[RMDB]
RNA sequence: GGGAACGACUCGAGUAGAGUCGAAAAUAAAAAGAUUACAGUACCGUAAUCAAGUACAAAAAGGUAGAAAUACCAAUAAGCCCAAAGUUACAAGGGCAAAGUAACACCAGGAAAGGAAACCAAAAAACACAAUAAUGGUGUUCGCACCAUUAUUGUGAAAAGAAACAACAACAACAAC
Reactivity to 2A3 in 0.01 (KOAc 150mM, MgCl2 10mM, bicine 150mM(pH8.5), 24C), signal-to-noise 2, nucleotides 027 to 126: u110a020a060a000a000a000g000a000u000u040a000c020a010g170u140a140c020c140g000u000a020a010u040c030a000a040g070u080a050c110a030a140a050a010a010g010g000u000a000g010a030a070a040u020a010c010c010a000a070u100a090a010g000c010c000c000a040a060a010g050u040u070a020c040a160a150g030g010g060c080a050a030a010g010u020a060a000c020a030c040c010a000g060g080a130a050a020g030g020a090a020a030c030c060a000a060a050a050a000a040
Reactivity to DMS in 0.01 (KOAc 150mM, MgCl2 10mM, bicine 150mM(pH8.5), 24C), signal-to-noise 2, nucleotides 027 to 126: u010a040a120a060a150a150g010a030u000u020a020c000a160g020u000a040c210c090g000u010a040a010u010c020a140a100g000u000a050c180a080a010a050a060a110g000g010u000a000g000a100a090a110u000a010c010c000a060a170u010a120a120g010c000c000c010a070a040a090g020u010u000a010c160a050a110g030g000g010c020a030a000a060g010u000a010a020c030a150c130c060a050g000g010a000a030a040g000g000a000a070a080c020c170a000a000a040a020a000a070